An RNA of 177 nucleotides, treated with 2A3 and DMS and read out base by base. Reactivities are given for positions 27 through 126. The data come from the RNA Mapping Database (RMDB), library OK2TRN.
RNA sequence: GGGAACGACUCGAGUAGAGUCGAAAAGGUAUUGAGAUACCCCUCCAGGGCGAGGUGCACCCCCAGGUCGGACGCCGCCAGCUGCCAGAAGGGAACGUCGCCGCGUCCGGGCAGCGCGGGCAGCACCGCUAUGGCCUAUUUUCGAAUAGGCCAUAGCAAAAGAAACAACAACAACAAC
Reactivity to 2A3 in 0.01 (KOAc 150mM, MgCl2 10mM, bicine 150mM(pH8.5), 24C), signal-to-noise 2, nucleotides 027 to 126: g020g000u040a030u150u300g170a300g020a070u060a050c020c020c000c010u010c020c030a050g070g070g060c080g060a040g000g000u060g000c020a030c000c020c000c030c030a010g000g240u030c020g040g000a030c030g020c010c020g000c000c020a030g020c020u140g030c030c000a160g090a300a090g160g000g000a080a010c020g060u070c050g020c040c020g010c000g000u000c010c000g000g020g050c020a020g000c060g020c130g010g020g010c000a030g000c000a010c000c010
Reactivity to DMS in 0.01 (KOAc 150mM, MgCl2 10mM, bicine 150mM(pH8.5), 24C), signal-to-noise 4, nucleotides 027 to 126: g010g020u000a030u010u010g000a190g010a190u000a040c020c000c030c020u010c020c030a120g000g000g030c120g000a040g010g020u000g010c030a300c030c000c010c010c080a150g000g000u000c030g020g010a070c070g000c010c110g010c040c090a140g030c030u000g010c000c010a220g010a120a150g020g000g010a060a050c050g020u010c220g000c060c180g010c040g010u000c000c010g010g010g010c030a050g000c090g030c150g020g020g020c020a050g010c020a030c050c050
Overview:
The 2A3 profile rests on 1,946 reads. The reactions ran in a buffer of 150 mM KOAc, 10 mM MgCl2 and 150 mM bicine (pH 8.5), at 24 C.